[RMDB]
RNA sequence: GGGAACGACUCGAGUAGAGUCGAAAACGAGCAUGAGCCAAUUCCGAGCGAAGGGGGCGCGGGAGGAAGGAGGAUUACCCGACAGGGAGUGACGGUAAAGAUGCGGGGAACGCCGAUGGGAACUCUCCCAAGAAGAAAAGAAGGGAAAAUCGGGAAGGCCUUUAUGUAACUUCGGUUACAUAAAGGCAAAAGAAACAACAACAACAAC
Reactivity to 2A3 in 0.01 (KOAc 150mM, MgCl2 10mM, bicine 150mM(pH8.5), 24C), signal-to-noise 1, nucleotides 027 to 156: c060g040a020g050c030a070u110g070a020g040c000c010a040a130u150u020c060c030g000a020g090c040g050a050a090g030g000g000g020g000c090g000c060g050g020g000a100g050g000a080a020g010g000a030g000g010a010u030u090a080c000c010c000g090a060c080a100g000g050g000a060g040u130g020a000c020g000g010u030a030a050a010g050a030u110g030c070g000g000g050g050a020a030c060g030c050c060g090a060u040g000g000g080a070a080c040u050c030u060c060c010c010a020a020g030a030a000g010a060a050a040a000g020a020a070g040g000g000a020a000a020a070u060c060g000g000g020a020a030g150